[RMDB]
RNA sequence: GGGAACGACUCGAGUAGAGUCGAAAAAAUAUGUUAUACAUGAAAAUCAAGCCAUAAUAGCUGGUUAAUAGCUCAGGAGCACAAGUUAAUAAUUAUCAGCGAAUGUUGGCACUUUGAUUGGAGGCUUGUACUUUUCCUUCAUAAGUCAUCAUAAUUAUCCUACUACUCCUUUCGAGGAGUAGUAGGAAAAAGAAACAACAACAACAAC
Reactivity to DMS in 0.01 (KOAc 150mM, MgCl2 10mM, bicine 150mM(pH8.5), 24C), signal-to-noise 1, nucleotides 027 to 156: a020a040u010a070u000g020u020u000a140u000a160c020a060u010g010a100a090a040a110u020c010a080a170g010c050c010a050u000a150a120u000a210g000c040u000g040g000u000u010a050a110u010a050g030c000u000c040a070g020g000a150g000c110a050c110a060a100g020u000u000a110a130u000a030a080u000u000a040u000c010a010g010c010g020a060a110u020g020u000u010g040g050c030a150c060u020u000u010g000a180u000u010g000g000a080g000g060c050u000u000g010u000a060c020u020u000u010u010c010c020u010u000c070a070u010a050a040g000u000c010a070u000c090a050u000a040a040u010u000a110
Reactivity to 2A3 in 0.01 (KOAc 150mM, MgCl2 10mM, bicine 150mM(pH8.5), 24C), signal-to-noise 1, nucleotides 027 to 156: a000a000u150a010u060g040u050u100a080u020a120c090a070u070g010a100a100a000a030u060c020a040a000g010c000c000a060u070a100a080u020a140g000c000u000g000g000u060u040a050a050u040a060g060c040u040c140a110g030g050a050g030c070a060c000a110a060g050u100u080a060a050u090a030a130u200u030a000u050c000a000g010c020g010a040a070u070g000u100u010g040g000c000a010c000u130u040u110g060a050u000u130g000g010a000g030g050c050u010u050g000u090a040c050u140u050u000u130c000c020u110u090c010a040u110a190a000g020u000c040a010u000c030a000u230a120a000u300u300a010
Structure probing data (DMS and 2A3) for a 207-nucleotide construct.
Conditions: 150 mM KOAc, 10 mM MgCl2 and 150 mM bicine (pH 8.5), 24 C.
Reactivities are given for positions 27 through 156.